An RNA of 177 nucleotides, treated with 2A3 and DMS and read out base by base. The RNA was probed in 150 mM KOAc, 10 mM MgCl2 and 150 mM bicine (pH 8.5) at 24 C. It was measured as part of the RMDB library OK2TRN.
[RMDB]
RNA sequence: GGGAACGACUCGAGUAGAGUCGAAAAUUAUGGCAGUUUAUAACCUUAAUAUACUCAGGAGGUAAUAAAUUCACUAGGAUGUUGGGGCGGAGCUAGGAUGUAGACUUAUCAUUAAAAAGGCAGGUACAAACAACAUAACAUUCGUGUUAUGUUGUUUAAAAGAAACAACAACAACAAC
Reactivity to 2A3 in 0.01 (KOAc 150mM, MgCl2 10mM, bicine 150mM(pH8.5), 24C), signal-to-noise 4, nucleotides 027 to 126: u160u080a100u060g050g000c010a010g020u060u100u000a080u030a040a020c000c000u060u050a180a020u110a060u030a130c040u030c050a050g100g020a030g080g000u020a030a050u050a070a090a030u100u040c010a020c080u030a040g070g020a050u070g050u130u140g030g000g020g000c020g000g000a010g010c010u020a010g010g030a010u050g030u050a020g010a020c010u040u120a060u130c040a080u050u190a040a120a010a020a010g040g010c020a010g010g010u030a040c070
Reactivity to DMS in 0.01 (KOAc 150mM, MgCl2 10mM, bicine 150mM(pH8.5), 24C), signal-to-noise 9, nucleotides 027 to 126: u010u010a050u000g010g020c070a070g010u000u000u000a040u000a100a080c020c010u000u000a080a110u010a120u010a110c110u010c120a100g010g010a030g010g010u000a050a040u000a020a050a050u000u000c090a070c080u000a080g010g010a060u010g000u000u000g020g010g010g010c070g010g000a060g010c070u000a060g010g000a050u000g010u000a060g010a070c080u000u000a060u010c060a060u010u010a030a050a060a080a080g000g010c040a020g010g010u010a070c160